An RNA of 177 nucleotides, treated with DMS and read out base by base. Values are in units of 0.01, from 0 to 300, in steps of 10. It was measured as part of the RMDB library OK2TRN. Conditions: 150 mM KOAc, 10 mM MgCl2 and 150 mM bicine (pH 8.5), 24 C. The DMS profile rests on 640 reads.
RNA sequence: GGGAACGACUCGAGUAGAGUCGAAAAGCAGCGGCUGUGGCUGAUCGAGGCGACGCGCUACAACGUGCUUCCGCUGGACGACGACACCGCCAGCCGCAUCAACCCCGAUCUGGCGGGCAGGCCGGUGCAUCCGGCGACCUUUCGAGGUCGCCGGAUGAAAAGAAACAACAACAACAAC
Reactivity to DMS in 0.01 (KOAc 150mM, MgCl2 10mM, bicine 150mM(pH8.5), 24C), signal-to-noise 1, nucleotides 027 to 126: g040c110a130g000c030g000g060c020u000g010u010g010g000c090u000g000a070u000c040g000a110g030g000c040g020a110c280g020c000g000c030u010a160c300a240a090c080g090u000g000c010u000u000c100c040g050c000u000g020g040a210c040g000a070c000g000a140c220a060c010c030g010c060c040a000g030c030c030g000c010a020u020c250a040a080c040c000c010c060g000a030u000c060u000g010g020c030g000g010g000c130a130g000g000c000c010g000g000u030g040